[RMDB]
RNA sequence: GGGAACGACUCGAGUAGAGUCGAAAAUGAAAGACAAACCAACGACAAAGGAAAAUACCAUAACACAUGAAUAAGGGAAAAAGGAAAACCAAGGAAACCAACCAAUACGAAAGGAAUUAAAGAAAAACAUUAAUACAUUCUUCGGAAUGUAUUAAUGAAAAGAAACAACAACAACAAC
Reactivity to 2A3 in 0.01 (KOAc 150mM, MgCl2 10mM, bicine 150mM(pH8.5), 24C), signal-to-noise 2, nucleotides 027 to 126: u070g060a020a030a030g020a000c040a030a070a050c010c010a030a010c050g110a020c050a050a060a040g050g050a100a110a030a000u090a020c020c040a000u010a110a050c010a010c010a070u070g060a070a030u120a110a040g080g000g070a010a050a000a000a100g050g000a090a140a020a000c030c020a000a020g080g010a020a050a050c010c020a010a010c010c010a000a070u100a100c030g040a110a060a000g070g020a030a060u110u090a130a070a020g090a000a120a000a010a000
Reactivity to DMS in 0.01 (KOAc 150mM, MgCl2 10mM, bicine 150mM(pH8.5), 24C), signal-to-noise 3, nucleotides 027 to 126: u010g000a060a090a050g030a070c120a020a110a080c060c040a050a110c120g030a110c040a050a060a110g000g010a060a060a050a090u000a070c110c010a010u020a070a060c060a060c080a040u000g000a050a050u000a080a050g010g010g010a020a050a050a140a030g030g020a090a030a090a080c090c010a030a050g000g000a080a060a110c080c040a010a050c030c030a060a060u000a040c140g010a030a070a070g000g010a080a050u000u010a030a080a040g000a030a030a080a040a140